Chemical mapping of a 177-nucleotide RNA with 2A3 and DMS.
[RMDB]
RNA sequence: GGGAACGACUCGAGUAGAGUCGAAAAUGUGAGGUUUCAGUCGCGUUACCAGGCAAUUGCUGCCGGAUUGCCCAUUGCCGAUACCCACCUCUGUGGCUUCGGGCGUGGCGCUAGACGUAGGCCAAGCAAUGGAGUGGAGUUUCGACUCCACUCCAUUAAAAGAAACAACAACAACAAC
Reactivity to 2A3 in 0.01 (KOAc 150mM, MgCl2 10mM, bicine 150mM(pH8.5), 24C), signal-to-noise 1, nucleotides 027 to 126: u110g020u030g040a060g000g080u030u090u180c100a060g030u030c010g020c030g000u020u020a060c030c050a040g010g040c020a050a060u180u140g100c070u080g070c080c000g020g000a100u070u100g000c000c040c020a060u020u280g100c010c000g000a010u070a060c020c010c010a030c010c100u180c170u290g030u030g000g000c000u000u020c030g030g010g000c030g000u030g000g010c050g010c040u040a050g010a030c020g000u050a140g040g000c010c000a010a020g000c050
Reactivity to DMS in 0.01 (KOAc 150mM, MgCl2 10mM, bicine 150mM(pH8.5), 24C), signal-to-noise 3, nucleotides 027 to 126: u000g020u000g020a300g010g030u000u000u000c090a170g020u020c010g010c030g010u000u000a110c080c090a190g010g020c020a040a070u010u010g010c220u010g010c040c020g000g010a090u000u010g000c020c010c050a080u000u000g010c010c010g000a050u000a110c300c000c030a040c050c260u010c240u000g000u000g010g010c050u000u000c030g020g020g000c040g000u000g010g000c060g020c010u010a110g010a050c050g000u020a130g000g000c010c050a050a260g030c070
DMS adducts were read by reverse transcription with MarathonRT. Source: RMDB library OK2TST, as collected in RNAgym. The DMS profile rests on 2,228 reads. Conditions: 150 mM KOAc, 10 mM MgCl2 and 150 mM bicine (pH 8.5), 24 C.